RNA sequence: GGGAACGACUCGAGUAGAGUCGAAAAUAAAAAGGGACGUGCAGCAGGCGAGGAACCCAAGCAGCUGUCCCGGGUGCCAUCGCCCUACGUGAGGACACCAGGCGUGGAUAGCACCAGGCCAAAAAAAACAUACGCAAUACUUCGGUAUUGCGUAUGUAAAAGAAACAACAACAACAAC
Reactivity to DMS in 0.01 (KOAc 150mM, MgCl2 10mM, bicine 150mM(pH8.5), 24C), signal-to-noise 2, nucleotides 027 to 126: u030a010a080a090a130a080g010g000g010a060c010g020u000g010c040a050g030c150a110g010g010c020g000a090g000g000a090a060c020c000c030a110a130g020c010a070g030c020u020g010u000c000c010c020g000g000g010u000g000c000c020a030u000c020g000c000c040c040u000a040c170g020u020g010a180g010g000a140c040a020c000c060a050g000g010c060g030u000g010g010a060u000a090g000c050a050c010c000a060g010g000c010c030a000a000a000a040a120a040a110
Reactivity to 2A3 in 0.01 (KOAc 150mM, MgCl2 10mM, bicine 150mM(pH8.5), 24C), signal-to-noise 1, nucleotides 027 to 126: u090a000a070a010a020a000g030g020g030a020c110g050u100g040c000a060g030c000a030g000g000c000g060a100g120g050a050a050c000c010c040a060a020g000c040a020g040c050u170g000u020c030c000c000g020g000g010u010g000c020c040a050u010c040g020c020c010c030u040a080c030g050u030g050a200g080g140a130c000a020c020c010a020g000g030c070g040u050g070g010a050u060a060g030c020a010c040c000a020g000g000c010c070a000a060a040a070a000a010a030